Chemical mapping of a 177-nucleotide RNA with 2A3 and DMS. For 2A3 the reverse transcriptase was SuperScript II with manganese. The RNA was probed in 150 mM KOAc, 10 mM MgCl2 and 150 mM bicine (pH 8.5) at 24 C.

[RMDB]
RNA sequence: GGGAACGACUCGAGUAGAGUCGAAAACCGUAACUAUAACGGUCCUAAGGUAGCGAAAUUCCUUGUCGGGUAAGUUCCGACCUGCACGAAAGGCGCAACGACUUGGGCGCUGUCUCAACCAUGGACCUUGCGAGUACAAAUUCGUUUGUACUCGCAAAAAAGAAACAACAACAACAAC
Reactivity to 2A3 in 0.01 (KOAc 150mM, MgCl2 10mM, bicine 150mM(pH8.5), 24C), signal-to-noise 4, nucleotides 027 to 126: c010c010g030u040a040a050c080u110a080u050a280a060c020g000g000u000c000c000u030a050a050g000g020u000a000g010c010g060a090a060a120u130u090c030c000u010u000g000u010c010g000g020g080u140a130a100g070u160u100c030c000g080a170c020c010u120g000c120a060c210g150a190a020a010g010g000c010g000c030a060a020c000g040a010c000u010u010g010g020g000c000g000c010u020g060u010c020u060c030a020a110c030c020a100u100g000g000a000c000c010
Reactivity to DMS in 0.01 (KOAc 150mM, MgCl2 10mM, bicine 150mM(pH8.5), 24C), signal-to-noise 4, nucleotides 027 to 126: c010c000g030u050a100a170c190u040a100u060a070a080c100g020g000u010c000c000u020a130a090g010g000u000a040g010c030g000a110a100a050u020u040c000c010u000u000g000u000c020g010g020g040u010a040a120g000u010u030c010c020g010a070c030c040u000g000c090a110c190g010a080a080a120g000g010c040g020c040a090a140c060g020a070c060u020u020g000g010g000c000g000c030u010g000u010c020u000c120a130a150c120c120a050u010g000g000a020c030c030